About this RNA: This 177-nucleotide RNA was probed chemically with DMS and 2A3. For DMS the reverse transcriptase was MarathonRT. For 2A3, 6,724 sequencing reads were counted.
RNA sequence: GGGAACGACUCGAGUAGAGUCGAAAAAGACUUGUAUUCGUACAAGUCUACAGAAAUUUCGCAAGCACACGAUCACACCUAGCGUUCUCAAUAACGAUCGAACAACGUGUCAAUUCGUUGACACGAAUCAACAACUCAGUUUCGACUGAGUUGUUGAAAAAGAAACAACAACAACAAC
Reactivity to DMS in 0.01 (KOAc 150mM, MgCl2 10mM, bicine 150mM(pH8.5), 24C), signal-to-noise 3, nucleotides 027 to 126: a010g010a000c000u000u000g010u000a000u000u020c200g040u000a000c010a010a010g000u000c000u010a080c150a120g020a090a060a110u000u020u000c010g040c050a110a090g010c080a060c110a060c030g010a030u000c020a130c120a080c120c060u000a070g000c050g000u000u000c000u010c030a120a090u010a020a070c170g020a010u020c070g010a120a080c230a070a190c020g000u000g000u000c010a010a030u000u000c140g030u000u010g010a020c000a010c000g000a040a090
Reactivity to 2A3 in 0.01 (KOAc 150mM, MgCl2 10mM, bicine 150mM(pH8.5), 24C), signal-to-noise 4, nucleotides 027 to 126: a000g000a000c000u010u000g000u010a020u040u060c200g040u040a010c000a010a000g000u000c000u000a010c000a010g210a020a140a060u050u060u040c050g000c060a020a040g050c020a050c000a010c120g030a030u020c010a040c020a020c070c030u040a020g000c000g030u020u000c010u000c000a020a110u170a110a040c080g030a030u080c040g050a070a030c030a030a040c020g000u000g000u010c010a010a020u040u090c210g040u060u000g000a000c020a010c000g000a000a080